[RMDB]
RNA sequence: GGGAACGACUCGAGUAGAGUCGAAAAAGAUAGCUACGGCUAUCAGGGCCAGAGCGGGAGUUUUGUCCGUUGUGUCCCGCGAAUCGCCGGCCGGAGGGAAGGGCCGUCAGGCCGGCGGGUGGCUUAAUCUCUUGAGCAAAUUCGUUUGCUCAAGAGAAAAAGAAACAACAACAACAAC
Reactivity to 2A3 in 0.01 (KOAc 150mM, MgCl2 10mM, bicine 150mM(pH8.5), 24C), signal-to-noise 2, nucleotides 027 to 126: a020g010a020u000a000g000c000u010a010c280g110g000c000u000a010u020c010a010g000g000g000c000c010a010g000a010g010c000g010g020g010a040g010u030u010u040u110g050u060c050c070g000u010u010g020u010g020u030c000c000c000g000c000g000a010a020u070c000g000c010c000g000g010c030c040g030g010a050g000g020g030a030a220g160g010g080c000c020g150u070c030a040g000g000c010c000g010g000c000g000g010g010u020g000g000c000u020u020a110a180
Reactivity to DMS in 0.01 (KOAc 150mM, MgCl2 10mM, bicine 150mM(pH8.5), 24C), signal-to-noise 2, nucleotides 027 to 126: a130g020a010u000a000g000c000u000a090c270g050g000c010u000a010u000c010a120g010g000g000c000c000a040g000a200g000c000g020g010g010a030g000u010u020u020u010g000u020c190c110g020u000u010g000u000g000u000c000c000c010g000c000g000a090a150u020c020g050c020c030g000g000c020c010g000g000a050g000g030g020a280a150g080g030g000c030c030g000u000c060a050g000g000c000c000g010g000c010g000g010g000u010g020g000c000u000u020a040a130